RNA sequence: GGGAACGACUCGAGUAGAGUCGAAAACGAACUCGAAUCACAUGAAGAACAAGUAGUUUAUCAGGCAAAGUCAAAGUCAGAAACAACGUUGGAACAGAUCGUAGCACUUUGUGCAUUGAUGGCGAUGGCCGCCAUACGUUUUCGAACGUAUGGCGGCAAAAGAAACAACAACAACAAC
Reactivity to DMS in 0.01 (KOAc 150mM, MgCl2 10mM, bicine 150mM(pH8.5), 24C), signal-to-noise 1, nucleotides 027 to 126: c160g020a160a110c030u000c020g000a100a150u000c050a100c090a070u000g010a080a090g010a070a110c050a090a140g000u000a080g020u020u000u000a110u000c020a040g050g000c040a120a070a070g070u000c130a050a050a080g000u000c010a100g000a090a140a030c120a050a120c220g020u040u000g000g000a050a090c130a090g000a040u000c070g000u000a220g000c000a000c020u000u000u000g100u000g000c000a250u000u000g000a120u030g000g010c050g000a090u020g000
Reactivity to 2A3 in 0.01 (KOAc 150mM, MgCl2 10mM, bicine 150mM(pH8.5), 24C), signal-to-noise 1, nucleotides 027 to 126: c000g070a020a070c020u000c080g110a070a040u190c030a110c010a130u190g060a070a170g020a020a100c000a040a120g070u050a020g000u040u000u160a230u010c020a000g110g000c030a000a110a110g030u060c000a080a060a000g000u040c010a000g170a080a060a010c020a020a020c050g030u000u050g130g030a000a050c050a020g000a040u210c000g040u050a020g040c050a020c100u070u050u230g000u010g000c010a010u010u090g120a140u040g020g000c000g020a050u040g140
About this RNA
The record gives the reactivity of an RNA of 177 nucleotides to DMS and 2A3. The reactions ran in a buffer of 150 mM KOAc, 10 mM MgCl2 and 150 mM bicine (pH 8.5), at 24 C. The data come from the RNA Mapping Database (RMDB), library OK2TST. For 2A3, 598 sequencing reads were counted.